The record gives the reactivity of an RNA of 177 nucleotides to DMS and 2A3. DMS (dimethyl sulfate) methylates the pairing face of unpaired adenines and cytosines. The RNA was probed in 150 mM KOAc, 10 mM MgCl2 and 150 mM bicine (pH 8.5) at 24 C. DMS adducts were read by reverse transcription with MarathonRT. Reactivities are given for positions 27 through 126.
RNA sequence: GGGAACGACUCGAGUAGAGUCGAAAAUGUUCGAGGUAGCGUGCCUCACCGAAGACCUGGUAGGCGUUGAGGAAUCCCACGAAGGCCUCGGCCUGGACCCACCAGACGCGCGCCCGGUCGAAGGAACGCGUUAAAUGAGGUUCGCCUCAUUUAACGCAAAAGAAACAACAACAACAAC
Reactivity to DMS in 0.01 (KOAc 150mM, MgCl2 10mM, bicine 150mM(pH8.5), 24C), signal-to-noise 2, nucleotides 027 to 126: u000g000u000u000c080g020a020g020g010u010a090g040c130g000u000g020c000c000u000c070a190c030c000g000a120a180g000a040c020c030u000g010g000u000a110g050g010c030g020u000u010g000a070g020g000a170a070u010c060c130c090a210c130g000a070a100g000g000c010c000u000c290g000g000c000c030u000g000g000a090c010c030c040a170c050c030a290g010a090c050g080c030g030c070g000c030c000c080g030g000u000c030g010a140a240g000g020a120a000c150
Reactivity to 2A3 in 0.01 (KOAc 150mM, MgCl2 10mM, bicine 150mM(pH8.5), 24C), signal-to-noise 2, nucleotides 027 to 126: u210g030u080u110c090g000a000g030g040u070a070g180c090g070u090g010c000c010u000c030a070c030c020g050a090a020g000a010c000c030u010g060g000u040a090g050g130c020g020u010u080g000a120g030g010a050a070u090c020c010c000a050c080g080a080a020g010g000c000c030u060c160g030g000c000c010u020g000g010a040c020c020c000a060c020c010a050g020a060c030g000c090g040c000g000c020c000c000g010g030u030c010g020a030a010g060g020a050a020c060